[RMDB]
RNA sequence: GGGAACGACUCGAGUAGAGUCGAAAAUUUUGUUCCGUCCUUCCAUGAAUGGACUCUUUCCUCGGGGCCCCGUUGAGAAGAGUCUUAGGUCGCUCUCCGCACCUCUCUCCCGGCGCCACGAGACCUCGUUAAAGGUAUUGUUCGCAAUACCUUUAACAAAAGAAACAACAACAACAAC
Reactivity to 2A3 in 0.01 (KOAc 150mM, MgCl2 10mM, bicine 150mM(pH8.5), 24C), signal-to-noise 2, nucleotides 027 to 126: u060u060u050u180g030u060u000c020c010g020u020c020c000u080u040c040c070a180u210g100a120a060u120g160g020a030c000u090c020u120u110u010c010c020u010c000g010g080g020g050c020c080c020c000g050u060u140g050a080g020a230a110g020a020g040u040c060u040u040a030g030g000u040c100g060c040u020c010u020c040c060g060c000a030c010c000u000c000u000c010u000c030c010c000g000g040c020g040c000c000a000c040g000a010g010a030c010c090u100c060
Reactivity to DMS in 0.01 (KOAc 150mM, MgCl2 10mM, bicine 150mM(pH8.5), 24C), signal-to-noise 5, nucleotides 027 to 126: u000u000u010u000g010u010u000c020c010g020u000c010c010u010u000c070c100a100u010g000a090a040u010g010g000a040c030u000c060u010u000u010c120c000u000c020g010g000g000g010c040c100c010c010g010u000u010g010a080g000a050a030g000a030g000u000c080u010u010a100g010g010u000c120g010c100u000c060u000c060c050g000c130a060c090c010u000c050u000c010u000c010c180c020g000g020c300g010c020c010a040c050g000a080g000a080c110c050u000c150

Chemical mapping of a 177-nucleotide RNA with 2A3 and DMS. Reactivities are rounded to 0.1 and cut off at 0 and 3. High DMS reactivity at an A or C suggests that its Watson-Crick edge is free. The reactions ran in a buffer of 150 mM KOAc, 10 mM MgCl2 and 150 mM bicine (pH 8.5), at 24 C. For DMS, 4,835 sequencing reads were counted. Source: RMDB library VIROID, as collected in RNAgym. DMS adducts were read by reverse transcription with MarathonRT.